The record gives the reactivity of an RNA of 207 nucleotides to 2A3. It was measured as part of the RMDB library OK3TST. For 2A3, 428 sequencing reads were counted.
RNA sequence: GGGAACGACUCGAGUAGAGUCGAAAACAUGAGCAAUAGGUCUUACGUGUAAAGGGUCGUGUACCCAUGUUUCGAAAUUGCCUUGCCAAGCUACGUGAAACAAAUUACCAGAGGUCCACAGAAAAAUUAUUGCUAACUGACCAAAAUGAGAAGCAAACGUGUACUGUCCAUUCGUGGACAGUACACGAAAAGAAACAACAACAACAAC
Reactivity to 2A3 in 0.01 (KOAc 150mM, MgCl2 10mM, bicine 150mM(pH8.5), 24C), signal-to-noise 1, nucleotides 027 to 156: c090a030u140g100a010g110c060a030a100u090a090g100g000u000c000u060u100a080c090g090u060g060u220a090a060a140g040g000g030u030c050g040u080g020u200a040c000c000c000a030u070g000u020u020u020c010g070a090a100a110u090u090g020c000c000u100u070g070c120c010a010a010g050c010u040a060c010g080u070g040a020a000a000c010a000a220a220u040u060a040c000c000a020g070a010g070g020u060c030c020a030c020a050g300a020a140a000a000a000u300u110a110u090u040g000c010u000a050a090c020u070g090a050c010c020a000a000a040a160u250g060a060g040a140a000g070c000a050a000a110